[RMDB]
RNA sequence: GGGAACGACUCGAGUAGAGUCGAAAAAUAGUGUUAUUCGUAACACUAUAUAUCCGAACACAAGGAUUCGUUCCAGAGACAUGCAUGCUAGCAUGAAAGCAACUGAACAAGCGUUCGCGCUUGUUAAUCAGUUAGGAUGUUUCGACAUCCUAACUGAAAAAGAAACAACAACAACAAC
Reactivity to 2A3 in 0.01 (KOAc 150mM, MgCl2 10mM, bicine 150mM(pH8.5), 24C), signal-to-noise 5, nucleotides 027 to 126: a000u020a010g000u000g010u020u010a030u050u050c220g020u020a010a000c000a000c010u000a000u000a000u000a000u000c050c000g030a100a020c070a010c030a100a070g190g000a020u030u030c010g000u020u000c010c010a020g010a010g010a190c010a010u010g020c010a010u130g160c060u120a070g000c010a010u030g050a080a010a000g070c030a030a070c070u160g040a020a010c030a000a000g010c010g020u060u110c200g000c000g000c090u000u000g000u010u010a020a060
Reactivity to DMS in 0.01 (KOAc 150mM, MgCl2 10mM, bicine 150mM(pH8.5), 24C), signal-to-noise 4, nucleotides 027 to 126: a020u000a000g000u000g010u000u000a010u000u020c190g010u000a010a000c000a000c010u000a010u000a040u000a080u010c090c010g000a060a050c070a050c080a070a220g000g010a020u000u000c020g010u000u010c010c000a120g010a190g010a160c030a010u000g010c010a100u010g030c180u010a070g010c010a010u010g010a080a090a090g010c140a040a060c140u000g010a030a020c000a000a000g010c000g020u000u000c260g020c000g010c000u000u000g000u000u000a050a080